This 177-nucleotide RNA was probed chemically with DMS. Values are in units of 0.01, from 0 to 300, in steps of 10. For DMS the reverse transcriptase was MarathonRT. The DMS profile rests on 1,073 reads. It was measured as part of the RMDB library M2PK90.
[RMDB]
RNA sequence: GGGAACGACUCGAGUAGAGUCGAAAAGAUAUUAACGCGCGUGCUGUGUCUAACGCGAAUUACCCAGUUUUUUUCGACUUUACUCGAGUCGUUAUAGCGUGAUAUGACACAGUUAUCCGCGAACGAAUCGCUAGUAACAAUUCGUUGUUACUAGCGAAAAAGAAACAACAACAACAAC
Reactivity to DMS in 0.01 (KOAc 150mM, MgCl2 10mM, bicine 150mM(pH8.5), 24C), signal-to-noise 1, nucleotides 027 to 126: g010a160u000a090u000u010a070a100c220g040c000g000c020g000u000g000c030u000g010u000g000u000c010u010a090a030c000g010c000g030a060a070u010u010a100c110c060c060a110g000u000u000u000u000u000u000u010c000g030a010c000u000u000u000a000c030u000c010g020a010g020u000c010g000u000u000a020u000a140g000c040g020u000g000a030u000a060u000g020a030c030a040c090a000g000u010u000a060u000c040c000g020c000g030a040a150c180g000a070a120